The record gives the reactivity of an RNA of 177 nucleotides to DMS and 2A3. For DMS, 1,054 sequencing reads were counted. Reactivities are given for positions 27 through 126. For 2A3, 1,014 sequencing reads were counted.

RNA sequence: GGGAACGACUCGAGUAGAGUCGAAAAGCAAAUCACAGAAAAAAUCAAAACCAAAGCCUGCGAUUUAGUGCUUAAGCAAGGAAAGUCAUUCUUAUUGAAGUAAUCCGAUAAGGGUCACUGGGUGCCAGUGACUCGAUACUUUCGAGUAUCGAGUCACAAAAGAAACAACAACAACAAC
Reactivity to DMS in 0.01 (KOAc 150mM, MgCl2 10mM, bicine 150mM(pH8.5), 24C), signal-to-noise 2, nucleotides 027 to 126: g020c080a070a100a030u000c020a000c010a070g020a010a070a070a300a090a070u040c090a090a050a170a130c070c040a050a050a110g000c150c000u000g000c060g020a050u000u000u000a030g010u000g030c050u000u000a030a120g000c080a070a060g000g040a100a060a060g020u000c070a040u000u000c020u000u010a070u010u000g010a080a040g020u010a060a080u000c030c000g010a070u040a070a060g000g030g010u000c090a020c090u000g020g010g010u010g000c110c040a110
Reactivity to 2A3 in 0.01 (KOAc 150mM, MgCl2 10mM, bicine 150mM(pH8.5), 24C), signal-to-noise 1, nucleotides 027 to 126: g000c020a000a000a040u100c000a030c040a070g250a150a090a000a000a000a040u170c070a070a070a030a130c020c040a130a010a050g110c020c010u000g040c000g000a000u020u040u200a090g060u030g060c010u040u040a060a010g020c050a060a020g050g020a230a000a000g050u020c010a060u070u000c010u020u100a120u040u080g010a080a010g040u090a070a050u020c000c040g000a020u020a060a030g030g020g020u030c010a000c050u070g030g040g080u070g060c040c010a050